[RMDB]
RNA sequence: GGGAACGACUCGAGUAGAGUCGAAAAAGCCCAGACCGCCCGCUAAGGUCCCAAAUUCAGAGCCGAGUGGCAAAGGAUGUGCGUCCGCGCAGACAACCAGGAGGUUGGCUUAGAAGCAGCCACCCCUAAAGGAAUACACGUUCGCGUGUAUUCCUUUAAAAGAAACAACAACAACAAC
Reactivity to DMS in 0.01 (KOAc 150mM, MgCl2 10mM, bicine 150mM(pH8.5), 24C), signal-to-noise 3, nucleotides 027 to 126: a100g000c030c010c020a130g000a150c070c060g020c010c000c020g010c060u000a030a100g040g040u000c020c020c040a050a080a100u030u000c110a050g000a290g010c040c000g020a150g090u020g040g000c040a060a130a090g000g030a090u020g020u000g010c040g000u010c050c090g040c040g010c030a080g010a080c090a080a100c050c020a080g010g020a120g020g010u010u020g000g010c010u020u020a070g000a090a140g020c170a080g010c010c000a080c020c000c000c060u000